[RMDB]
RNA sequence: GGGAACGACUCGAGUAGAGUCGAAAAUAGACACUGGAGCAGAUGUCUCUAUCAUUGCUUUAAAUCAGUGGCCAAAAAAUUGGCCUAAACAAAAGGCUGUUACAGGACUUGUCGGCAUAAGCACAGCCUCUGCAUCGUUGUUCGCAACGAUGCAGAGAAAAGAAACAACAACAACAAC
Reactivity to DMS in 0.01 (KOAc 150mM, MgCl2 10mM, bicine 150mM(pH8.5), 24C), signal-to-noise 1, nucleotides 027 to 126: u020a100g000a070c060a040c040u010g000g020a050g010c000a080g000a170u020g040u070c150u000c040u000a070u000c020a100u040u000g010c010u000u000u000a090a030a010u000c110a010g070u000g000g000c000c000a000a020a030a020a140a300u070u020g000g000c000c000u000a000a010a050c030a090a000a100a100g000g000c010u000g000u010u000a030c140a030g020g000a070c090u050u030g010u000c060g000g000c090a070u010a070a020g100c210a010c050a040g000c070
Reactivity to 2A3 in 0.01 (KOAc 150mM, MgCl2 10mM, bicine 150mM(pH8.5), 24C), signal-to-noise 3, nucleotides 027 to 126: u200a030g050a030c030a000c060u050g090g050a060g030c050a020g020a140u080g040u110c030u000c030u220a130u210c000a140u080u050g010c000u160u120u140a110a100a100u050c000a070g020u050g010g020c030c000a070a100a030a000a000a080u090u030g000g000c020c000u070a140a080a020c030a020a100a000a000g090g000c000u000g010u100u030a070c040a020g060g070a050c050u110u090g070u040c010g030g000c060a090u030a240a000g050c030a000c000a020g010c000

Structure probing data (DMS and 2A3) for a 177-nucleotide construct. For 2A3 the reverse transcriptase was SuperScript II with manganese. High 2A3 reactivity points to a flexible backbone, as in loops and unpaired stretches. The data come from the RNA Mapping Database (RMDB), library OK1LIB.